[RMDB]
RNA sequence: GGGAACGACUCGAGUAGAGUCGAAAACAGGUAGCCCAGACCUUCAAGGCUACGGUGCGUUGCGACGCACGGUCUGAUUCUUCACAACGACGUUCACCCCGUCUUCUUCCAUCCCCCUGGGGCAGUGUAUAACCAGCAGCCUUCGGGCUGCUGGUAAACUUGUCUUUACGUUCGCGUAAAGACAAGUAAAAGAAACAACAACAACAAC
Reactivity to DMS in 0.01 (KOAc 150mM, MgCl2 10mM, bicine 150mM(pH8.5), 24C), signal-to-noise 1, nucleotides 027 to 156: c060a030g000g000u000a020g010c000c010c240a070g040a090c030c020u000u040c070a070a300g020g000c000u000a030c000g010g000u000g010c040g010u020u000g020c090g060a150c010g010c000a020c020g000g010u000c050u020g040a200u000u000c050u000u010c080a130c090a090a100c030g000a070c020g010u000u000c090a070c000c010c080c040g020u000c010u000u020c030u000u000c020c020a170u010c020c050c010c000c090u000g000g020g020g000c060a080g020u000g000u000a120u000a100a080c000c000a040g000c020a030g010c000c010u000u000c300g070g060g070c000u000g010c010u000g000g010u000a000a020
Description:
An RNA of 207 nucleotides, treated with DMS and read out base by base. It was measured as part of the RMDB library M2RFPK. The reactions ran in a buffer of 150 mM KOAc, 10 mM MgCl2 and 150 mM bicine (pH 8.5), at 24 C.